[RMDB]
RNA sequence: GGGAACGACUCGAGUAGAGUCGAAAAUCUGAUUUGACUGCGACACUGUCAAAUUGCGGGGAAGCCCUAAAGCCUUAUUCACCAAGCAAUUGUGGAAACACUCUUGUGGCCAGGUUAAUAGCCUCGGGUAUGGUAACAGUAGUAAGGAUAAAUGUGAACUACAGAUAGAGUUCGCUCUAUCUGUAGUAAAAGAAACAACAACAACAAC
Reactivity to DMS in 0.01 (KOAc 150mM, MgCl2 10mM, bicine 150mM(pH8.5), 24C), signal-to-noise 4, nucleotides 027 to 156: u010c050u010g000a030u000u010u010g010a010c010u000g000c090g030a290c130a300c090u000g010u000c000a020a010a030u000u000g020c070g020g000g010g020a120a140g010c030c010c030u000a040a100a150g000c010c010u000u000a030u000u000c010a030c020c010a140a220g000c010a020a040u000u010g020u000g000g020a250a110a200c020a010c010u000c090u000u000g020u000g000g020c000c010a070g010g020u000u000a090a130u000a160g000c000c020u010c110g050g000g030u000a040u020g020g010u000a070a060c060a020g000u000a030g000u000a010a010g020g000a090u000a030a070a150u010g020u010g000a110
Reactivity to 2A3 in 0.01 (KOAc 150mM, MgCl2 10mM, bicine 150mM(pH8.5), 24C), signal-to-noise 5, nucleotides 027 to 156: u050c030u040g000a010u000u000u000g010a010c010u040g060c100g150a060c070a030c200u070g010u010c010a020a010a010u040u080g050c100g000g000g000g030a040a050g030c010c000c000u070a100a080a020g000c000c000u000u000a010u010u020c020a010c060c120a020a000g000c000a000a020u010u010g000u010g020g000a020a050a010c000a000c010u000c000u010u010g020u070g010g000c010c000a010g030g010u100u010a030a030u050a080g010c020c020u050c170g010g000g000u100a190u200g000g000u010a040a010c000a020g090u120a000g010u000a030a010g010g000a000u060a010a090a020u150g030u040g060a030
Chemical mapping of a 207-nucleotide RNA with DMS and 2A3. High DMS reactivity at an A or C suggests that its Watson-Crick edge is free. The DMS profile rests on 9,058 reads. 2A3 adducts were read by reverse transcription with SuperScript II with manganese.